[RMDB]
The data come from the RNA Mapping Database (RMDB), library M2PK90. An RNA of 177 nucleotides, treated with 2A3 and DMS and read out base by base. High 2A3 reactivity points to a flexible backbone, as in loops and unpaired stretches. The RNA was probed in 150 mM KOAc, 10 mM MgCl2 and 150 mM bicine (pH 8.5) at 24 C.
RNA sequence: GGGAACGACUCGAGUAGAGUCGAAAAGAAAAGCACGGCAUGCACAUGAAGCACAUGAAGCAGUACAAGCAGUACAAGCACAUGAAGCACUACAAGCAGUAGAAGCAGCCGAAGCACAUGAAAAAAACUAGUGUUGAUACUUCGGUAUCAACACUAGAAAAGAAACAACAACAACAAC
Reactivity to 2A3 in 0.01 (KOAc 150mM, MgCl2 10mM, bicine 150mM(pH8.5), 24C), signal-to-noise 2, nucleotides 027 to 126: g030a000a070a000a000g000c000a000c010g010g000c100a200u070g020c020a090c020a090u110g070a170a030g000c030a000c000a050u010g030a060a010g020c000a000g000u020a010c050a070a150g090c080a060g070u010a010c050a110a050g000c000a000c000a040u040g020a090a010g020c020a010c050u060a010c010a130a110g190c110a040g040u020a000g010a090a010g000c000a000g000c030c010g020a040a000g010c010a060c020a100u160g170a070a040a000a020a010a020a030
Reactivity to DMS in 0.01 (KOAc 150mM, MgCl2 10mM, bicine 150mM(pH8.5), 24C), signal-to-noise 2, nucleotides 027 to 126: g000a160a050a110a100g010c100a140c070g000g030c020a010u030g050c030a070c120a070u000g000a130a090g000c090a180c080a000u040g000a070a060g000c020a290g000u000a020c030a080a140g060c220a120g020u020a000c030a070a150g020c010a200c080a020u000g000a110a020g010c000a030c110u000a060c030a040a070g000c110a110g000u000a020g010a080a120g000c030a030g010c000c030g000a100a070g000c000a050c120a070u000g020a000a000a000a120a110a120a070